[RMDB]
RNA sequence: GGGAACGACUCGAGUAGAGUCGAAAACAGCGUACCUUCGGGUACGCUGAAAACUAAAACAAAUGCAAAGCCGGAUACGGCAAAACGAGCGAAAAGAAUAAGAAAGUAGGUGGUUCGCCACCUACAACAAUCAAUAUUCCUUCGGGAAUAUUGAUUGAAAAGAAACAACAACAACAAC
Reactivity to DMS in 0.01 (KOAc 150mM, MgCl2 10mM, bicine 150mM(pH8.5), 24C), signal-to-noise 3, nucleotides 027 to 126: c010a010g000c000g050u010a000c010c000u010u020c150g030g020g010u010a000c000g000c000u000g000a020a030a090a150c100u000a070a080a090a080c120a090a110a030u010g010c030a040a180a250g000c000c020g010g010a210u010a070c040g010g030c010a020a020a090a040c210g000a240g030c040g010a080a040a100a070g010a080a080u000a080a110g000a100a070a070g000u000a000g010g020u000g010g000u010u010c190g010c020c000a000c000c000u020a000c000a080a090
Reactivity to 2A3 in 0.01 (KOAc 150mM, MgCl2 10mM, bicine 150mM(pH8.5), 24C), signal-to-noise 2, nucleotides 027 to 126: c010a000g000c000g020u010a000c000c000u020u050c160g060g000g000u000a010c010g000c010u000g000a000a000a000a010c000u050a000a000a030a090c030a040a070a020u200g010c010a120a000a030g010c000c000g120g000a180u260a300c030g000g000c000a000a040a000a010c040g020a000g050c020g020a050a020a030a090g110a060a110u230a200a050g110a190a090a010g000u000a000g010g010u010g000g040u020u030c160g010c030c000a000c000c000u010a000c000a000a000
An RNA of 177 nucleotides, treated with DMS and 2A3 and read out base by base. For 2A3, 4,101 sequencing reads were counted. The reactions ran in a buffer of 150 mM KOAc, 10 mM MgCl2 and 150 mM bicine (pH 8.5), at 24 C.